[RMDB]
RNA sequence: GGGAACGACUCGAGUAGAGUCGAAAAGAUAUGGAAGGGACAUCAGCCACAGGAAGGCCUACCCACCAGCCGUGUCGGAAACGACACGAGCUGAGGGCUGGAAGUGGCUGAUGUCCCUUCCUAAGUCCUAUUUUAUUCUGUUCGCAGAAUAAAAUAGAAAAGAAACAACAACAACAAC
Reactivity to DMS in 0.01 (KOAc 150mM, MgCl2 10mM, bicine 150mM(pH8.5), 24C), signal-to-noise 1, nucleotides 027 to 126: g030a060u010a170u010g030g010a010a000g010g010g000a020c000a040u000c020a000g010c020c010a010c000a080g000g000a300a200g010g020c050c000u000a170c120c010c070a300c110c000a020g000c040c030g050u010g000u010c000g000g010a240a130a150c000g000a000c010a020c030g020a030g050c020u000g010a050g010g000g010c060u010g020g000a300a130g000u000g000g000c070u030g000a000u010g010u000c000c010c010u000u000c000c000u000a040a090g010u010c070
An RNA of 177 nucleotides, treated with DMS and read out base by base. DMS adducts were read by reverse transcription with MarathonRT. The data come from the RNA Mapping Database (RMDB), library TTRINS. Values cover nucleotides 27 to 126.